[RMDB]
RNA sequence: GGGAACGACUCGAGUAGAGUCGAAAAGAUAUGGAUCACGUAGGGAGCUCUGUAAGGUGAAUAGAGUAUGUCGGAAACGACAUACUCUAUUCACCUUACUGAGCUUUGAUCUACCUGAUCCUAAGUCCUUGUAAGAGUACUUCGGUACUCUUACAAGAAAAGAAACAACAACAACAAC
Reactivity to DMS in 0.01 (KOAc 150mM, MgCl2 10mM, bicine 150mM(pH8.5), 24C), signal-to-noise 2, nucleotides 027 to 126: g020a170u000a290u000g010g000a020u000c000a000c300g010u000a010g010g010g000a020g020c000u010c010u010g020u000a010a000g000g020u000g000a030a000u000a010g010a020g000u000a000u010g000u020c000g000g010a150a100a200c010g040a010c010a000u000a000c000u010c000u000a000u000u010c000a000c000c000u010u010a000c010u000g010a010g010c010u000u010u010g000a070u020c000u000a010c010c060u000g000a010u000c000c000u000a030a120g010u000c040

Structure probing data (DMS) for a 177-nucleotide construct. The DMS profile rests on 2,694 reads.